Overview:
Structure probing data (DMS and 2A3) for a 177-nucleotide construct. DMS adducts were read by reverse transcription with MarathonRT. For DMS, 3,525 sequencing reads were counted. 2A3 is a SHAPE reagent: it acylates the 2'-hydroxyl of flexible nucleotides of all four kinds.
RNA sequence: GGGAACGACUCGAGUAGAGUCGAAAAUACGUGACCUUCGGGUCACGUAACCGGCGUACCCAAGUCAAAAAGAGAGACGCAAUCUCGACAGCGGCCUUUUCGUAUGAGUUGCUUUCGAGCAACUCAAUCGGAAUAACAGUUUCGACUGUUAUUCCGAAAAAGAAACAACAACAACAAC
Reactivity to DMS in 0.01 (KOAc 150mM, MgCl2 10mM, bicine 150mM(pH8.5), 24C), signal-to-noise 3, nucleotides 027 to 126: u000a000c010g030u000g010a000c000c000u010u020c160g040g000g020u000c000a010c000g020u000a010a070c100c060g010g010c020g010u010a070c010c010c010a090a090g010u010c070a060a060a030a100a100g000a080g000a070g010a070c040g000c110a100a180u000c040u000c030g000a060c100a050g010c030g000g000c080c040u000u000u000u000c060g010u000a130u000g010a020g010u000u000g000c000u000u010u020c140g010a040g000c010a000a010c000u010c000a020a050
Reactivity to 2A3 in 0.01 (KOAc 150mM, MgCl2 10mM, bicine 150mM(pH8.5), 24C), signal-to-noise 3, nucleotides 027 to 126: u040a010c000g000u010g010a010c010c010u010u030c260g080g000g000u000c000a000c000g000u010a000a000c030c030g010g000c020g020u060a050c000c010c010a040a050g060u070c050a060a040a060a140a000g060a000g010a000g000a030c060g040c110a040a120u010c040u030c080g070a050c050a020g040c020g050g070c000c020u060u130u120u170c070g050u120a120u200g000a010g000u000u020g010c000u040u050u140c220g050a020g000c000a010a000c000u000c000a000a000